[RMDB]
RNA sequence: GGGAACGACUCGAGUAGAGUCGAAAAGCGGAUCGGCGUCCGGCGCAUCUCGCCGAACUCGGAGAUCAGCUUGCCGUCCUCGCUGUAGACCUUGAGGGGGAUCUGCAGCUGGACGUUACGCAGAGCUAAGAUGUCAUCGUUUCGACGAUGACAUCUUAAAAGAAACAACAACAACAAC
Reactivity to 2A3 in 0.01 (KOAc 150mM, MgCl2 10mM, bicine 150mM(pH8.5), 24C), signal-to-noise 5, nucleotides 027 to 126: g030c020g020g000a020u020c020g060g020c020g080u040c020c010g040g000c030g000c060a120u080c080u090c050g000c000c010g030a060a050c030u010c060g160g060a120g000a080u010c020a040g010c000u020u020g040c010c000g000u000c000c010u010c110g000c000u000g010u020a000g010a010c010c010u040u100g140a300g070g080g000g000g050a230u000c000u000g010c000a010g000c000u000g000g000a000c020g000u030u070a080c100g000c110a030g030a030g130c010u020
Reactivity to DMS in 0.01 (KOAc 150mM, MgCl2 10mM, bicine 150mM(pH8.5), 24C), signal-to-noise 2, nucleotides 027 to 126: g000c000g020g010a020u000c020g010g010c130g030u000c050c010g000g040c020g000c300a160u000c250u010c020g000c020c000g000a000a050c000u010c030g000g000a230g020a020u000c030a030g000c000u020u010g030c070c010g000u010c000c000u000c300g000c000u000g010u000a010g000a000c030c010u000u010g010a200g050g000g000g000g020a080u000c000u010g010c000a000g000c000u000g010g000a000c000g030u010u010a040c230g020c070a050g010a160g000c110u000
This 177-nucleotide RNA was probed chemically with 2A3 and DMS. 2A3 adducts were read by reverse transcription with SuperScript II with manganese. 2A3 is a SHAPE reagent: it acylates the 2'-hydroxyl of flexible nucleotides of all four kinds.